RNA sequence: GGGAACGACUCGAGUAGAGUCGAAAAACAAAGAGCAACACGCGCAGUCACGCAGGCAGUUGGAAUAAUCUGCCAAGAAUAACUAAUGGACGGUAGACUGCGCGAACCACCGACCAAUAGAAAAAAACAUUGUCUAUGCGUUCGCGCAUAGACAAUGAAAAGAAACAACAACAACAAC
Reactivity to 2A3 in 0.01 (KOAc 150mM, MgCl2 10mM, bicine 150mM(pH8.5), 24C), signal-to-noise 1, nucleotides 027 to 126: a000c070a020a080a050g100a000g070c050a000a020c020a000c030g020c000g000c010a020g010u000c000a000c110g040c020a050g010g010c020a050g010u110u080g030g050a100a030u140a060a020u080c000u010g010c000c010a000a000g150a050a090u270a080a030c020u090a030a060u070g030g040a060c080g020g020u010a010g010a000c000u040g000c030g000c020g000a000a000c020c010a040c000c010g060a030c040c020a020a030u150a130g140a050a120a010a000a000a000a000
Reactivity to DMS in 0.01 (KOAc 150mM, MgCl2 10mM, bicine 150mM(pH8.5), 24C), signal-to-noise 1, nucleotides 027 to 126: a140c090a060a020a110g030a180g000c030a030a010c120a080c030g000c000g020c020a100g000u030c000a150c220g020c070a020g000g000c010a020g020u000u020g020g010a060a210u010a140a090u020c070u000g000c000c010a160a090g000a070a090u050a060a130c060u010a100a010u010g000g010a150c060g010g010u000a100g000a040c000u000g000c000g010c000g010a020a040c080c150a070c030c000g040a070c040c000a000a080u010a070g030a000a000a020a010a000a010a130